RNA sequence: GGGAACGACUCGAGUAGAGUCGAAAACACUGCUUUUAUAAGCACUAACAAGUCCAGGAGGACACAAAAGUGGCGAAGGCGAAGUUCCAGCGGACCAAGCCCCACGUCAACAUCGGGACCAUCGGUCACUACCCGGAACAUUCGUGUUCCGGGUAGUAAAAGAAACAACAACAACAAC
Reactivity to DMS in 0.01 (KOAc 150mM, MgCl2 10mM, bicine 150mM(pH8.5), 24C), signal-to-noise 2, nucleotides 027 to 126: c010a150c240u000g010c000u020u000u040u000a100u000a070a080g030c020a060c160u020a130a150c200a130a100g010u000c050c000a110g010g000a070g010g020a040c050a100c100a040a050a090a170g050u000g010g000c150g010a300a100g020g010c030g020a160a090g010u040u000c010c040a170g020c270g000g000a000c040c020a040a300g000c000c030c000c020a040c070g020u000c040a060a040c060a080u020c080g010g070g000a090c010c040a040u000c090g000g000u000c070
Reactivity to 2A3 in 0.01 (KOAc 150mM, MgCl2 10mM, bicine 150mM(pH8.5), 24C), signal-to-noise 2, nucleotides 027 to 126: c050a050c070u040g010c030u160u090u050u080a300u120a180a000g040c020a010c040u090a110a090c060a190a050g000u020c020c010a030g060g170a100g030g010a070c030a020c070a190a080a060a080g040u040g020g000c040g080a040a010g000g010c020g030a050a000g000u030u040c020c060a100g030c200g070g000a000c020c010a020a000g010c000c000c000c000a220c020g040u030c010a060a080c000a060u070c010g000g050g010a060c000c000a140u090c080g050g000u040c000
This 177-nucleotide RNA was probed chemically with DMS and 2A3. DMS adducts were read by reverse transcription with MarathonRT. The reactions ran in a buffer of 150 mM KOAc, 10 mM MgCl2 and 150 mM bicine (pH 8.5), at 24 C. For 2A3 the reverse transcriptase was SuperScript II with manganese. It was measured as part of the RMDB library OK2TST.